RNA sequence: GGGAACGACUCGAGUAGAGUCGAAAAGCUAAGAGGAAAGUUCACAGCCCUCAAUGCUUACUUCAGAAAGACUGACAGAGCAUGAACUGACAUUCUAAGGACACAUCUCAGGUAACUAUAGAAACAAGAACAAACCAAACCCAAACCCAGCAGAAGACUAGCAAAAAUGUUUCGACAUUUUUGCUAGAAAAGAAACAACAACAACAAC
Reactivity to 2A3 in 0.01 (KOAc 150mM, MgCl2 10mM, bicine 150mM(pH8.5), 24C), signal-to-noise 3, nucleotides 027 to 156: g030c010u050a050a070g020a020g010g030a210a090a040g030u190u170c050a050c060a140g020c030c010c000u000c000a010a100u080g010c010u030u060a060c010u020u050c010a040g100a080a120a020g060a080c020u010g010a010c000a030g040a000g040c030a050u050g040a070a020c010u000g020a020c000a060u080u000c030u060a050a030g040g010a020c010a000c010a130u040c040u030c050a000g030g010u020a060a030c050u020a040u040a240g150a100a050a010c040a060a030g060a090a020c020a050a040a010c010c030a010a020a060c000c010c000a030a020a030c010c020c010a020g040c020a020g030a100a000g030a090
Reactivity to DMS in 0.01 (KOAc 150mM, MgCl2 10mM, bicine 150mM(pH8.5), 24C), signal-to-noise 1, nucleotides 027 to 156: g010c100u000a120a160g040a130g040g000a150a070a180g040u010u000c060a050c080a290g010c130c000c000u000c090a090a000u000g000c030u010u000a080c040u000u080c050a130g060a170a020a100g000a150c020u010g000a150c050a070g000a030g000c010a140u010g010a050a060c010u000g000a070c150a140u000u000c020u050a150a030g030g000a080c020a080c070a050u000c040u000c020a070g060g010u000a030a070c040u000a070u010a160g010a080a080a140c040a010a060g000a020a040c080a030a050a170c010c000a030a080a110c010c010c000a080a090a080c020c010c030a090g000c070a090g010a040a110g040a200